[RMDB]
RNA sequence: GGGAACGACUCGAGUAGAGUCGAAAAUGUGCUUUUUGUAUGCUUGGCGCACAGAGUUGCCAAUUCACGACAAAAGAUCGACAAAUUAGGAUGAUGCAGAAGGAGGACACGCUUUUCAUUAUCUGGUUGCCACCUAAUUUAAGUUCCACAUCAAGGAAUACCACCUCCGAUUCGUCGGAGGUGGUAUAAAAGAAACAACAACAACAAC
Reactivity to 2A3 in 0.01 (KOAc 150mM, MgCl2 10mM, bicine 150mM(pH8.5), 24C), signal-to-noise 2, nucleotides 027 to 156: u160g000u030g010c010u090u030u000u050u100g030u000a070u060g030c000u000u020g020g000c020g010c040a090c040a070g130a010g060u130u140g010c010c000a010a010u140u140c080a020c050g100a000c070a000a020a000a000g020a120u050c010g030a010c030a030a050a040u040u020a030g090g000a120u090g010a040u130g070c000a010g000a060a000g050g060a010g010g000a030c030a010c080g030c000u040u140u080u070c060a140u030u200a050u110c010u030g110g000u090u020g010c040c000a030c010c000u020a050a030u000u050u090a050a010g000u000u040c020c010a080c000a090u120c050a140a090g070g000a050
Reactivity to DMS in 0.01 (KOAc 150mM, MgCl2 10mM, bicine 150mM(pH8.5), 24C), signal-to-noise 2, nucleotides 027 to 156: u020g020u000g000c040u000u000u000u010u000g050u010a070u000g020c300u000u000g020g010c020g010c050a150c190a190g000a300g020u020u020g010c000c020a020a120u000u020c100a100c070g010a100c020a080a080a090a070g040a170u000c040g020a050c020a000a060a080u000u000a170g050g000a080u010g040a040u020g000c080a080g020a070a010g000g020a150g000g000a030c050a040c120g000c020u000u000u000u010c060a070u000u020a060u020c050u020g020g020u030u000g010c020c010a130c030c030u000a030a140u010u000u000a070a140g030u000u000c010c010a030c130a060u030c140a030a140g020g020a090

This 207-nucleotide RNA was probed chemically with 2A3 and DMS. For DMS, 2,048 sequencing reads were counted. The RNA was probed in 150 mM KOAc, 10 mM MgCl2 and 150 mM bicine (pH 8.5) at 24 C. For 2A3, 1,070 sequencing reads were counted.